An RNA of 177 nucleotides, treated with 2A3 and DMS and read out base by base. The 2A3 profile rests on 1,615 reads. For 2A3 the reverse transcriptase was SuperScript II with manganese. The RNA was probed in 150 mM KOAc, 10 mM MgCl2 and 150 mM bicine (pH 8.5) at 24 C.
[RMDB]
RNA sequence: GGGAACGACUCGAGUAGAGUCGAAAAGGCUAUGCCGGCUGACUUUUGCGCGAUUAUUCACGCCCCCGCGCUAGCCAGCCCCGGGCACCACGUAAUACUGGGUCUUAUCGACUCGGGGUACCGCGGAACCCCAAGACGAGUUCGCUCGUCUUGGGGUAAAAGAAACAACAACAACAAC
Reactivity to 2A3 in 0.01 (KOAc 150mM, MgCl2 10mM, bicine 150mM(pH8.5), 24C), signal-to-noise 4, nucleotides 027 to 126: g060g000c050u060a020u300g000c010c000g020g000c060u020g040a160c090u210u170u150u210g010c070g000c020g060a170u090u140a090u300u250c020a040c050g000c000c000c000c010c000g000c020g000c000u000a020g000c000c000a010g000c000c000c000c000g000g000g020c040a040c060c010a040c060g090u110a060a040u010a140c010u020g000g000g110u070c080u090u240a170u210c110g110a170c020u000c000g000g010g000g000u020a020c010c030g040c090g040g010a060
Reactivity to DMS in 0.01 (KOAc 150mM, MgCl2 10mM, bicine 150mM(pH8.5), 24C), signal-to-noise 1, nucleotides 027 to 126: g010g000c010u040a080u010g010c000c090g000g000c130u000g020a150c230u000u010u040u010g000c030g020c060g020a190u020u140a080u010u020c120a120c080g010c010c170c140c050c000g000c040g000c010u000a020g000c000c000a090g030c000c020c070c020g000g000g010c070a150c000c000a030c010g000u000a200a110u020a070c070u000g000g030g030u020c040u020u020a030u000c100g000a090c000u000c000g000g000g010g010u000a030c010c030g030c050g010g000a110